[RMDB]
RNA sequence: GGGAACGACUCGAGUAGAGUCGAAAAAUACGCUGAGACUGGCGGUAAGGGCCAUUUUCUCCACCAACAUCAAUACCUUCGUCCCAAUCAAUAUUGAGCCAACGAAGAGCCUCAAUAAUCUGCUGGACCUAUACCGAGUGUUCGCACUCGGUAUAGGAAAAGAAACAACAACAACAAC
Reactivity to DMS in 0.01 (KOAc 150mM, MgCl2 10mM, bicine 150mM(pH8.5), 24C), signal-to-noise 2, nucleotides 027 to 126: a040u000a100c070g010c060u010g000a140g000a120c080u010g030g020c000g000g030u000a110a080g000g000g020c020c050a080u000u000u010u000c020u010c000c050a120c050c030a060a060c120a070u000c050a030a020u000a100c080c040u000u000c060g000u000c050c000c020a030a080u000c190a060a090u000a030u000u010g010a050g000c060c010a060a070c120g000a040a100g010a090g020c230c010u010c020a020a030u000a060a050u000c100u000g000c060u010g000g000a300
Reactivity to 2A3 in 0.01 (KOAc 150mM, MgCl2 10mM, bicine 150mM(pH8.5), 24C), signal-to-noise 2, nucleotides 027 to 126: a000u060a030c030g000c040u040g010a050g040a170c040u030g040g040c010g000g040u060a050a070g090g060g020c040c000a000u020u000u080u020c030u000c030c000a030c010c050a030a090c020a040u090c040a060a080u060a150c000c010u010u020c040g020u000c000c000c010a000a050u060c080a070a140u040a010u150u040g020a000g020c050c010a020a050c120g100a110a050g050a030g000c010c050u000c020a010a030u130a050a070u090c130u140g030c000u010g020g040a010